Chemical mapping of a 207-nucleotide RNA with 2A3 and DMS. DMS adducts were read by reverse transcription with MarathonRT. The reactions ran in a buffer of 150 mM KOAc, 10 mM MgCl2 and 150 mM bicine (pH 8.5), at 24 C. For 2A3, 564 sequencing reads were counted. 2A3 is a SHAPE reagent: it acylates the 2'-hydroxyl of flexible nucleotides of all four kinds. In probing experiments dimethyl sulfate is read out at A N1 and C N3, which are open when not base-paired.
RNA sequence: GGGAACGACUCGAGUAGAGUCGAAAAAAAUCUGGAGGAAACCAGGUGCAAGCUUCCAAGAGUCCUCUCCCUGUGGCUACACAGGGCAUGCCUAUGCCUAUUUCUCCAGCAAUGAGUUGUGCCAGCAGUUGCAAGGUGUUGUAUAUAGGGAAGCUCAGAACUAUCAGUACUUCGGUACUGAUAGUUCAAAAGAAACAACAACAACAAC
Reactivity to 2A3 in 0.01 (KOAc 150mM, MgCl2 10mM, bicine 150mM(pH8.5), 24C), signal-to-noise 1, nucleotides 027 to 156: a000a010a010u090c010u020g000g010a000g000g050a030a020a010c100c030a090g000g000u020g030c030a010a050g000c000u080u060c040c030a030a020g010a040g130u130c010c010u070c020u000c000c010c010u000g020u010g020g160c070u230a030c000a020c040a030g000g000g000c030a050u060g020c000c000u110a110u070g020c000c000u060a040u010u030u000c020u000c000c010a000g020c000a010a130u150g020a050g090u090u070g040u100g050c000c010a040g040c040a030g050u060u060g030c050a050a050g090g050u000g010u030u050g000u060a070u000a030u050a200g020g010g010a010a010g020c030u060c070a030
Reactivity to DMS in 0.01 (KOAc 150mM, MgCl2 10mM, bicine 150mM(pH8.5), 24C), signal-to-noise 1, nucleotides 027 to 156: a150a070a110u000c030u000g000g000a130g040g030a060a090a080c120c050a070g030g010u000g020c060a090a060g010c020u000u000c050c020a060a120g030a190g000u000c030c060u000c040u000c010c000c000u000g000u000g020g010c100u030a070c070a060c010a040g000g000g030c050a010u000g000c000c030u000a180u010g010c010c000u010a130u000u000u000c010u000c010c020a110g010c080a080a060u000g000a090g020u000u000g040u000g010c030c030a140g050c030a070g010u010u020g030c030a050a130g010g050u000g060u000u000g020u000a050u000a090u000a080g000g060g000a030a100g000c010u000c040a300